Structure probing data (2A3) for a 207-nucleotide construct. The RNA was probed in 150 mM KOAc, 10 mM MgCl2 and 150 mM bicine (pH 8.5) at 24 C. High 2A3 reactivity points to a flexible backbone, as in loops and unpaired stretches. Reactivities are given for positions 27 through 156.
RNA sequence: GGGAACGACUCGAGUAGAGUCGAAAAUUGCGCCUCCGAUUCGCCGUCGGCAUUUCCCCAGCAGCCAUGACCUACCAGGCUGCGGUGCGGUUCGCCGCACAGGUCAUCCCUCAUCGGGCGCGUCCUGGAUAGGGCUAUACUUUCGAGUAUAGCCCAAGUCUGUUGUUUAGUUCGCUAAACAACAGACAAAAGAAACAACAACAACAAC
Reactivity to 2A3 in 0.01 (KOAc 150mM, MgCl2 10mM, bicine 150mM(pH8.5), 24C), signal-to-noise 1, nucleotides 027 to 156: u040u110g000c000g010c020c020u060c020c070g000a070u010u170c070g000c130c060g070u000c020g030g000c050a040u040u080u070c000c010c000c010a050g000c000a000g010c000c000a090u170g060a020c000c000u190a240c070c020a000g000g000c000u010g010c000g010g000u050g000c010g030g030u060u060c150g010c060c000g000c020a000c000a000g050g050u040c000a140u070c010c010c020u170c040a150u110c050g000g000g000c000g000c000g020u050c000c020u040g070g000a040u040a130g020g000g000c000u030a000u000a000c000u110u100u160c250g070a020g000u000a000u000a030g010c010c000c000a000a000